[RMDB]
RNA sequence: GGGAACGACUCGAGUAGAGUCGAAAACAAUAAUUCAAAUAGCCCAGCUUUUUCCUUUACCCGUAAUAGCGAUGGCAAUAUUGCUGGAUUUAAAUACGAAGGUAAUGAUAUUCAAAAAAAGAUUGUCCAAUAAAGGGGUGUUCGCACCCCUUUAUUGAAAAGAAACAACAACAACAAC
Reactivity to 2A3 in 0.01 (KOAc 150mM, MgCl2 10mM, bicine 150mM(pH8.5), 24C), signal-to-noise 2, nucleotides 027 to 126: c020a030a110u180a110a140u300u000c070a020a020a170u160a080g090c090c070c000a020g010c000u040u190u000u050u050c070c040u050u030u120a160c010c010c000g040u000a040a020u010a180g070c000g050a060u100g090g060c070a020a050u200a070u040u030g000c000u000g060g000a130u000u040u090a060a210a090u070a020c020g050a120a200g010g000u030a070a000u050g010a070u050a170u190u300c210a000a010a000a000a010a000a010g060a060u090u000g020u000c000
Reactivity to DMS in 0.01 (KOAc 150mM, MgCl2 10mM, bicine 150mM(pH8.5), 24C), signal-to-noise 2, nucleotides 027 to 126: c120a060a090u010a070a110u050u040c050a010a190a090u010a140g000c020c010c000a190g000c050u040u010u000u010u010c060c000u000u020u010a040c000c000c040g000u020a050a110u080a070g030c040g050a190u030g000g010c030a020a080u030a080u010u010g020c040u010g000g010a110u010u000u010a050a050a050u000a000c060g000a160a060g010g010u000a010a030u000g000a110u010a050u040u000c050a020a030a030a110a040a080a060g000a070u000u000g000u000c080